The record gives the reactivity of an RNA of 177 nucleotides to 2A3 and DMS. The 2A3 profile rests on 657 reads. DMS adducts were read by reverse transcription with MarathonRT. The reactions ran in a buffer of 150 mM KOAc, 10 mM MgCl2 and 150 mM bicine (pH 8.5), at 24 C. The data come from the RNA Mapping Database (RMDB), library OK2TST. 2A3 adducts were read by reverse transcription with SuperScript II with manganese.
[RMDB]
RNA sequence: GGGAACGACUCGAGUAGAGUCGAAAACAAAUACAGACGGUCCCCAACUUAGGAUGGUUUAACUUAAGACUUUUCAACUUUACAAUGAUGCAAGAUACACAUUCAGUAGAAACCAUACUCUGAGUGAGUCCCUUUUACGUUUCGACGUAAAAGGGACAAAAGAAACAACAACAACAAC
Reactivity to 2A3 in 0.01 (KOAc 150mM, MgCl2 10mM, bicine 150mM(pH8.5), 24C), signal-to-noise 1, nucleotides 027 to 126: c020a000a090a030u190a050c080a000g210a020c010g060g060u050c010c000c050c000a050a010c030u010u010a010g050g000a020u000g010g000u000u100u080a060a040c020u060u020a140a000g040a070c040u090u180u010u100c080a070a140c090u020u130u160a140c090a130a150u200g050a090u090g140c000a040a050g000a160u100a180c080a000c020a070u000u040c010a010g010u020a000g270a040a020a010c020c010a000u000a070c050u090c020u130g040a040g020u020g010a000
Reactivity to DMS in 0.01 (KOAc 150mM, MgCl2 10mM, bicine 150mM(pH8.5), 24C), signal-to-noise 1, nucleotides 027 to 126: c020a090a050a120u000a020c190a070g000a250c140g000g010u000c010c030c000c060a030a070c060u000u000a060g000g020a020u020g010g050u000u000u000a060a060c030u000u030a040a060g000a110c070u000u000u000u000c080a060a050c050u000u020u010a140c090a040a020u020g010a070u000g030c080a110a040g000a110u010a020c110a040c020a030u000u000c120a090g000u000a180g030a070a010a070c050c030a030u030a070c060u000c000u000g000a060g000u000g000a120